[RMDB]
RNA sequence: GGGAACGACUCGAGUAGAGUCGAAAAUUGCGCCUCCGAUUCGCCGUCGGCAUUUCCCCAGCAGCCAUGACCUACCAGGCUGCGGUGCGGCUCGCCGCACAGGUCAUCCCUCAUCGGGCGGGUCCUGGAUAGGGCUAUACUUUCGAGUAUAGCCCAACAUAAUACCCAUCUUCGGAUGGGUAUUAUGAAAAGAAACAACAACAACAAC
Reactivity to DMS in 0.01 (KOAc 150mM, MgCl2 10mM, bicine 150mM(pH8.5), 24C), signal-to-noise 1, nucleotides 027 to 156: u000u010g000c020g010c030c020u000c020c020g000a100u000u000c070g020c040c030g000u000c010g030g000c110a130u010u000u010c010c020c000c050a100g010c040a040g000c010c010a100u020g020a070c090c040u000a120c060c070a140g040g030c020u010g010c000g000g030u000g010c040g020g020c070u010c170g030c000c010g000c040a040c040a040g030g010u010c020a180u000c020c020c030u000c080a070u000c100g000g020g010c020g000g020g040u000c020c040u020g010g000a190u010a100g020g050g010c010u010a050u000a000c010u000u000u030c190g000a070g010u010a020u000a010g010c010c000c000a010a030
Reactivity to 2A3 in 0.01 (KOAc 150mM, MgCl2 10mM, bicine 150mM(pH8.5), 24C), signal-to-noise 2, nucleotides 027 to 156: u100u080g030c020g010c020c020u060c020c010g060a090u090u080c040g040c070c040g070u050c040g040g000c030a050u040u050u050c000c020c000c000a030g000c000a010g000c000c010a150u170g020a080c000c030u130a210c060c100a030g010g000c010u000g020c000g010g000u020g000c020g010g000c030u050c090g120c020c000g000c020a030c030a010g020g000u050c010a090u070c010c000c020u080c060a120u080c050g000g000g040c030g010g020g010u030c000c040u060g020g030a090u110a150g010g010g000c000u000a000u000a000c010u040u100u170c270g060a010g010u000a000u000a000g010c020c000c000a000a000
Record summary: Chemical mapping of a 207-nucleotide RNA with DMS and 2A3. Source: RMDB library M2RFPK, as collected in RNAgym. For 2A3 the reverse transcriptase was SuperScript II with manganese. The 2A3 profile rests on 1,963 reads. For DMS the reverse transcriptase was MarathonRT. Reactivities are given for positions 27 through 156.